[RMDB]
RNA sequence: GGGAACGACUCGAGUAGAGUCGAAAAAGUUUUGUCUCGCUAUUAGGAUAUGAAAUAUAGCGCAUGAAAUGAUCAAGAGCAUUUCGAUAUUCAUUCCACACCUGUAUGGGCAGCCUAAAAGCAAGUGCACAUUUUACCCGUUCGCGGGUAAAAUGUGAAAAGAAACAACAACAACAAC
Reactivity to 2A3 in 0.01 (KOAc 150mM, MgCl2 10mM, bicine 150mM(pH8.5), 24C), signal-to-noise 1, nucleotides 027 to 126: a000g050u060u060u120u240g060u100c010u040c040g000c040u020a040u060u120a010g060g000a140u040a070u300g030a020a050a000u120a040u080a030g060c060g010c080a110u130g050a000a030a060u070g060a040u140c130a170a020g000a030g150c080a100u140u180u010c040g070a020u000a040u150u070c020a020u120u000c010c000a030c010a030c080c000u060g050u120a080u050g050g050g000c010a000g030c010c010u050a090a110a010a050g080c040a000a110g080u150g000
Reactivity to DMS in 0.01 (KOAc 150mM, MgCl2 10mM, bicine 150mM(pH8.5), 24C), signal-to-noise 1, nucleotides 027 to 126: a090g000u000u000u010u010g000u000c020u000c050g010c010u000a050u000u000a030g010g010a110u020a010u020g000a170a100a060u000a050u000a060g000c060g050c210a090u000g000a020a010a010u000g000a090u000c110a080a190g010a080g010c110a080u000u000u000c030g000a120u000a070u000u000c010a070u010u000c010c030a050c090a060c060c020u010g010u000a040u000g010g000g000c070a060g000c000c030u000a030a040a090a090g000c080a050a050g000u010g010

An RNA of 177 nucleotides, treated with 2A3 and DMS and read out base by base.
The data come from the RNA Mapping Database (RMDB), library OK2TRN.
The DMS profile rests on 928 reads.
As a SHAPE reagent, 2A3 marks flexible, mostly unpaired nucleotides at the ribose 2'-OH.
For 2A3, 559 sequencing reads were counted.